[RMDB]
RNA sequence: GGGAACGACUCGAGUAGAGUCGAAAAGAUAUGGAUGUACCUAGGGAGAUGCGUCGGAAACGACACAUCGAGGAUCUAGAACAUCCUAAGUCAAACGAGUGAGAACGCUUCGGCGUUCUCACUCGAAUCCUCGUUAUAAGUUCGCUUAUAACGAGGAAAAAGAAACAACAACAACAAC
Reactivity to 2A3 in 0.01 (KOAc 150mM, MgCl2 10mM, bicine 150mM(pH8.5), 24C), signal-to-noise 1, nucleotides 027 to 126: g050a010u130a010u120g020g000a020u030g000u080a110c030c000u000a000g030g040g000a030g000a000u010g000c010g010u000c010g030g030a040a100a050c010g000a010c020a000c000a060u000c000g000a120g000g010a030u000c000u000a000g010a010a020c000a010u000c000c010u010a090a020g050u040c050a090a050a080c010g040a010g000u020g010a010g020a010a030c000g000c000u090u170c300g030g040c010g000u000u000c000u010c040a020c010u000c000g000a000a020
Reactivity to DMS in 0.01 (KOAc 150mM, MgCl2 10mM, bicine 150mM(pH8.5), 24C), signal-to-noise 2, nucleotides 027 to 126: g010a030u000a300u020g000g000a020u000g010u000a090c180c000u000a030g000g000g000a050g000a000u000g030c010g020u000c010g000g000a130a070a200c010g010a010c000a010c000a000u000c020g000a080g000g010a040u000c010u010a000g000a140a020c000a000u010c000c000u000a020a120g010u020c020a050a120a220c010g000a020g060u000g000a020g000a000a000c030g010c010u000u010c210g010g020c010g000u000u000c030u000c000a000c000u000c000g000a040a040
Chemical mapping of a 177-nucleotide RNA with 2A3 and DMS. Conditions: 150 mM KOAc, 10 mM MgCl2 and 150 mM bicine (pH 8.5), 24 C. The 2A3 profile rests on 3,208 reads. 2A3 adducts were read by reverse transcription with SuperScript II with manganese.